[RMDB]
RNA sequence: GGGAACGACUCGAGUAGAGUCGAAAACUAUGGUGAGCCCCUAUCUAGUAUAGCAAUCCACCAAGCAGGUGAGUUCACACAAUUCAGGUUCUCAUAGAAAAUGCGCCCUGACUUGACAGGUAUGGUCCGUGAUGCGAUAGUUCGCUAUCGCAUCACGAAAAGAAACAACAACAACAAC
Reactivity to 2A3 in 0.01 (KOAc 150mM, MgCl2 10mM, bicine 150mM(pH8.5), 24C), signal-to-noise 3, nucleotides 027 to 126: c000u030a030u090g110g000u130g000a010g000c000c000c000c000u000a010u000c090u070a060g070u100a040u040a060g000c030a040a070u040c000c000a010c030c000a050a060g110c050a000g010g050u000g050a120g000u020u060c010a030c030a000c040a130a040u100u080c040a070g000g000u070u000c010u000c000a010u020a050g170a010a140a040a010u090g020c060g020c030c000c000u020g030a030c030u070u100g040a010c010a050g070g050u210a120u160g060g000u020c040
Reactivity to DMS in 0.01 (KOAc 150mM, MgCl2 10mM, bicine 150mM(pH8.5), 24C), signal-to-noise 2, nucleotides 027 to 126: c010u020a010u010g020g000u030g000a090g000c000c000c100c190u000a000u000c010u040a140g000u020a070u040a070g000c090a000a000u000c040c030a020c060c000a080a130g000c230a170g050g000u000g000a030g060u000u000c060a120c090a010c110a010a210u010u060c090a050g000g000u000u000c040u020c030a110u010a040g000a100a040a000a030u000g000c080g000c300c050c000u000g000a000c060u000u020g010a070c080a030g010g010u000a010u000g000g010u000c060
The record gives the reactivity of an RNA of 177 nucleotides to 2A3 and DMS. It was measured as part of the RMDB library OK1LIB. Conditions: 150 mM KOAc, 10 mM MgCl2 and 150 mM bicine (pH 8.5), 24 C.